[RMDB]
RNA sequence: GGGAACGACUCGAGUAGAGUCGAAAACGGGACAGCCCUGGCGCCGCGCGGGACAGCCCUGGCGCCGCGCGGGAAGCGCUUGCUCCACCACAGCUCUCCAUUUAGAGGCUGAGAAACAGUUCCUCGUAAGCCCUUCCGCACAGCUCACCCGCGUGCCGAUUAGGACGUGAUUCGUCACGUCCUAAUCAAAAGAAACAACAACAACAAC
Reactivity to DMS in 0.01 (KOAc 150mM, MgCl2 10mM, bicine 150mM(pH8.5), 24C), signal-to-noise 1, nucleotides 027 to 156: c080g000g020g030a140c030a130g010c040c020c040u000g020g040c080g060c080c010g010c050g070c030g040g040g000a100c060a230g020c050c010c020u000g040g010c000g040c000c000g010c010g060c020g020g030g000a100a100g000c060g040c040u000u000g020c000u010c010c020a060c020c080a220c030a040g000c000u030c000u000c000c030a180u010u000u010a070g010a040g000g030c010u000g010a140g020a140a060a120c020a200g010u000u000c000c010u030c100g000u000a070a150g000c000c040c020u000u020c020c020g040c030a040c060a090g000c030u040c050a210c000c030c010g030c030g040u010g040c040c040
Reactivity to 2A3 in 0.01 (KOAc 150mM, MgCl2 10mM, bicine 150mM(pH8.5), 24C), signal-to-noise 2, nucleotides 027 to 156: c010g010g010g030a010c030a050g030c000c010c020u100g020g030c030g010c020c000g000c020g020c040g040g040g070a080c050a120g010c040c010c130u240g090g000c000g000c000c000g000c010g000c000g000g020g020a060a010g040c010g010c010u000u030g010c020u050c050c030a070c020c020a070c000a020g000c010u080c000u040c270c040a150u190u160u250a050g000a010g000g000c010u030g020a050g130a110a110a000c060a060g020u080u090c000c000u050c010g050u070a020a040g010c000c040c000u040u000c030c000g010c000a050c050a070g040c000u020c010a060c010c010c020g000c030g060u060g010c020c030

The record gives the reactivity of an RNA of 207 nucleotides to DMS and 2A3. The RNA was probed in 150 mM KOAc, 10 mM MgCl2 and 150 mM bicine (pH 8.5) at 24 C. For 2A3, 1,546 sequencing reads were counted.